[RMDB]
RNA sequence: GGGAACGACUCGAGUAGAGUCGAAAAGCUUAAUAACCUGCGCUGAGCCCUUCUCCCCCAGCUUGCCUGUGUCCUAGGGAAUUGGAAGGUCAUCCUUGACAGGAUCGUGUGGAAGUCCUGCUCGGGGUCCAAACAUGGUAAUUCGUUACCAUGUUAAAGUACUUUACACGUUCGCGUGUAAAGUACUAAAAGAAACAACAACAACAAC
Reactivity to 2A3 in 0.01 (KOAc 150mM, MgCl2 10mM, bicine 150mM(pH8.5), 24C), signal-to-noise 2, nucleotides 027 to 156: g020c000u060u100a070a000u050a180a190c000c020u080g010c060g010c010u030g060a070g030c020c000c000u040u080c070u050c000c020c000c030c010a000g010c030u030u090g030c000c000u050g010u040g010u050c010c030u050a030g020g020g030a070a060u070u050g060g030a060a060g040g000u040c010a060u100c030c000u060u100g000a020c010a000g000g000a010u060c060g000u050g000u070g200g030a070a000g010u000c010c000u000g010c030u020c020g000g000g020g000u000c010c020a010a010a020c000a000u000g000g000u020a000a020u050u050c040g000u030u000a000c000c000a000u000g000u010u010a020a000
Reactivity to DMS in 0.01 (KOAc 150mM, MgCl2 10mM, bicine 150mM(pH8.5), 24C), signal-to-noise 1, nucleotides 027 to 156: g020c040u000u060a090a100u010a080a060c020c040u000g020c030g020c060u000g000a120g010c030c020c050u000u020c060u000c030c020c000c030c050a100g000c020u000u000g010c060c030u010g010u010g000u000c030c050u000a070g000g040g020a070a120u000u000g020g010a130a100g020g040u000c060a080u000c020c000u000u010g020a090c000a060g020g020a020u000c010g010u000g040u000g040g000a160a100g000u010c010c000u000g000c040u000c030g010g010g000g000u010c040c080a100a020a050c000a030u000g020g030u000a020a100u010u020c300g000u000u000a000c000c000a010u000g000u000u000a020a040